The data come from the RNA Mapping Database (RMDB), library OK3TST. Structure probing data (2A3) for a 207-nucleotide construct. Values cover nucleotides 27 to 156. For 2A3, 586 sequencing reads were counted.
RNA sequence: GGGAACGACUCGAGUAGAGUCGAAAACAGCAUUGCUGGAUCCAUGGAUCUUCCUGGAAAGCAGGGAGAGAGAUAAAAGUGCAGCAGAAAAAUGGAGUCAGAUGCUAAGGUCCUUGAAUGUCACAUUCAGGAGCCUCGGUAGUUUUCUACAAGCCAACUAUUACGCGAUGUUCGCAUCGCGUAAUAGAAAAGAAACAACAACAACAAC
Reactivity to 2A3 in 0.01 (KOAc 150mM, MgCl2 10mM, bicine 150mM(pH8.5), 24C), signal-to-noise 1, nucleotides 027 to 156: c030a000g060c060a120u050u260g010c000u030g030g030a100u010c010c010a140u060g100g000a040u020c010u000u060c000c010u000g040g040a260a070a020g180c020a010g010g050g000a040g000a000g020a010g010a060u100a200a070a030a010g030u090g060c040a050g000c000a020g200a080a100a010a010a010u110g000g010a010g010u010c010a020g020a040u020g000c020u000a000a040g000g000u000c000c000u070u140g000a000a000u170g100u300c080a070c030a300u020u000c010a000g090g020a140g100c000c010u030c020g050g040u060a050g040u080u040u110u070c020u020a020c030a060a040g080c030c000a020a050
Conditions: 150 mM KOAc, 10 mM MgCl2 and 150 mM bicine (pH 8.5), 24 C.